This 177-nucleotide RNA was probed chemically with DMS and 2A3.
[RMDB]
RNA sequence: GGGAACGACUCGAGUAGAGUCGAAAAAAGACGCAAUCAAAGCUGCUGAUGCGGUGGUAGCUACGGCUGUGCCCCUGAUGGAGAAGGCUUUUGAGGCUCGUAGGGCAGCCGAAUUGGCUGAGUGGAAUCCAUUAUGCGGAUUCGUCCGCAUAAUGGAAAAAGAAACAACAACAACAAC
Reactivity to DMS in 0.01 (KOAc 150mM, MgCl2 10mM, bicine 150mM(pH8.5), 24C), signal-to-noise 3, nucleotides 027 to 126: a080a100g010a130c090g000c050a090a060u010c080a060a200a100g020c040u000g010c010u000g000a100u010g020c060g010g020u020g020g000u000a040g010c010u000a110c190g010g010c040u000g030u000g000c010c000c020c040u010g010a120u000g000g000a090g010a160a160g000g000c030u000u010u000u000g010a150g000g010c030u000c040g020u010a070g010g010g010c050a000g000c010c010g000a050a070u000u000g000g010c020u010g000a120g010u000g000g010a100a150
Reactivity to 2A3 in 0.01 (KOAc 150mM, MgCl2 10mM, bicine 150mM(pH8.5), 24C), signal-to-noise 2, nucleotides 027 to 126: a000a060g070a020c020g030c000a000a070u020c020a060a020a080g020c020u030g010c000u050g040a070u120g000c040g040g020u020g030g040u050a040g000c020u040a030c070g050g030c020u050g040u130g140c030c010c000c010u080g020a070u120g060g040a110g010a170a050g040g000c000u070u090u100u150g150a140g010g040c030u010c100g060u070a030g060g030g010c020a000g000c000c000g030a090a110u080u080g030g000c010u000g000a030g060u050g050g030a040a030